[RMDB]
Background:
The record gives the reactivity of an RNA of 177 nucleotides to 2A3 and DMS. The data come from the RNA Mapping Database (RMDB), library TTRDES. The 2A3 profile rests on 4,663 reads. Values cover nucleotides 27 to 126. The RNA was probed in 150 mM KOAc, 10 mM MgCl2 and 150 mM bicine (pH 8.5) at 24 C.
RNA sequence: GGGAACGACUCGAGUAGAGUCGAAAAGAUAUGGAAAUUGAAAUGUGCAAGGAACCACGUCGGAAACGACGUGGAAUUCUGAUGACCACAUCGUACGUUUCCUAAGUCAAAUCGUGCUUCGGCACGAGAACUCCAUCUACUUCGGUAGAUGGAGUUCAAAAGAAACAACAACAACAAC
Reactivity to 2A3 in 0.01 (KOAc 150mM, MgCl2 10mM, bicine 150mM(pH8.5), 24C), signal-to-noise 3, nucleotides 027 to 126: g000a010u010a010u060g000g080a030a060a030u150u250g070a170a280a070u060g000u040g010c080a260a300g020g000a010a010c010c020a010c010g000u000c000g000g000a040a010a000c000g000a000c030g000u000g010g020a000a020u020u020c000u020g120a170u030g020a010c010c000a000c000a010u040c100g200u210a260c200g000u000u000u000c000c010u000a030a010g000u020c010a000a010a270u080c000g000u000g000c020u090u060c300g180g000c000a000c000g000a020
Reactivity to DMS in 0.01 (KOAc 150mM, MgCl2 10mM, bicine 150mM(pH8.5), 24C), signal-to-noise 3, nucleotides 027 to 126: g010a020u000a120u030g020g000a010a010a010u000u010g010a190a140a070u000g010u020g000c030a080a080g010g000a030a100c000c000a000c010g020u010c000g000g000a050a030a060c000g020a020c000g040u000g000g010a010a030u000u000c000u000g000a080u020g010a140c300c000a010c000a000u010c150g000u000a190c280g010u000u000u000c000c000u000a020a100g000u000c010a070a070a200u010c020g010u000g010c000u000u000c240g020g010c000a000c010g010a030